[RMDB]
This 177-nucleotide RNA was probed chemically with 2A3 and DMS. The RNA was probed in 150 mM KOAc, 10 mM MgCl2 and 150 mM bicine (pH 8.5) at 24 C. The 2A3 profile rests on 3,524 reads. Source: RMDB library OK1LIB, as collected in RNAgym. 2A3 adducts were read by reverse transcription with SuperScript II with manganese. For DMS the reverse transcriptase was MarathonRT.
RNA sequence: GGGAACGACUCGAGUAGAGUCGAAAACGUCCACCGCCUUCGCUGCGAGUGAGGCGCUGGAGCACGUCGCGGGAAGCAGGAGCGCCAGCAUCAGUGCUACCUCCAGAACACGCAGCAAAACGUGACCAUUAUCCGCUGGAUUCGUCCAGCGGAUAAUAAAAGAAACAACAACAACAAC
Reactivity to 2A3 in 0.01 (KOAc 150mM, MgCl2 10mM, bicine 150mM(pH8.5), 24C), signal-to-noise 4, nucleotides 027 to 126: c030g070u000c010c010a020c010c020g020c010c020u160u180c120g020c040u070g060c070g070a070g040u040g010a060g010g000c010g000c040u030g000g030a040g000c010a000c040g040u070c090g000c020g000g060g000a150a060g030c060a040g030g120a110g020c060g000c060c040a020g010c000a030u140c070a030g070u020g090c000u050a110c000c000u000c010c000a010g080a060a010c080a010c060g020c020a040g040c030a040a000a010a120c060g010u030g040a020c010c010
Reactivity to DMS in 0.01 (KOAc 150mM, MgCl2 10mM, bicine 150mM(pH8.5), 24C), signal-to-noise 2, nucleotides 027 to 126: c180g050u000c000c020a000c140c040g000c010c000u040u000c080g000c050u010g070c060g010a090g050u000g000a080g000g000c040g000c180u020g000g000a110g000c110a030c050g020u020c110g000c000g000g000g000a050a080g000c240a140g030g000a040g020c210g010c060c150a040g000c030a040u000c180a160g000u000g010c000u000a130c170c020u000c050c010a040g000a180a150c100a090c000g000c000a080g000c120a090a020a120a060c060g010u000g000a160c090c060